[RMDB]
RNA sequence: GGGAACGACUCGAGUAGAGUCGAAAAGGUGACGGGUAUGAAAAAACUAACAGACAUCAUGUCUAUCUACUACGCUACAUUAGUGGUCGCGUUGGCAUCUAACUGCCUGAGCAUUCCAAUAUUUGUGGGUUGCACCUAAGUUCGCUUAGGUGCAACCAAAAGAAACAACAACAACAAC
Reactivity to 2A3 in 0.01 (KOAc 150mM, MgCl2 10mM, bicine 150mM(pH8.5), 24C), signal-to-noise 2, nucleotides 027 to 126: g080g010u070g000a010c000g050g000g000u060a060u180g130a170a030a000a030a010a010c040u100a060a060c020a060g110a030c000a050u130c030a040u190g020u090c000u000a020u070c020u010a040c020u060a020c030g000c020u080a060c040a080u130u150a100g060u100g190g000u000c070g000c030g040u010u070g020g030c010a030u000c070u040a070a130c070u010g010c000c000u000g010a020g020c020a040u120u030c020c000a100a030u090a190u090u100u080g260u100g100
Reactivity to DMS in 0.01 (KOAc 150mM, MgCl2 10mM, bicine 150mM(pH8.5), 24C), signal-to-noise 1, nucleotides 027 to 126: g020g080u020g020a090c090g020g020g000u010a050u010g000a000a060a100a090a060a060c130u010a080a160c190a060g000a030c010a090u010c160a080u030g010u000c050u000a080u000c060u020a050c060u000a080c080g030c060u000a020c030a140u010u000a040g000u000g000g000u010c060g000c030g000u010u000g010g000c000a080u010c070u010a080a020c220u000g000c050c020u020g000a120g000c020a150u000u000c010c010a080a130u020a060u010u000u000g020u000g000

This 177-nucleotide RNA was probed chemically with 2A3 and DMS.
Reactivities are given for positions 27 through 126.
Source: RMDB library OK2TRN, as collected in RNAgym.
For DMS, 816 sequencing reads were counted.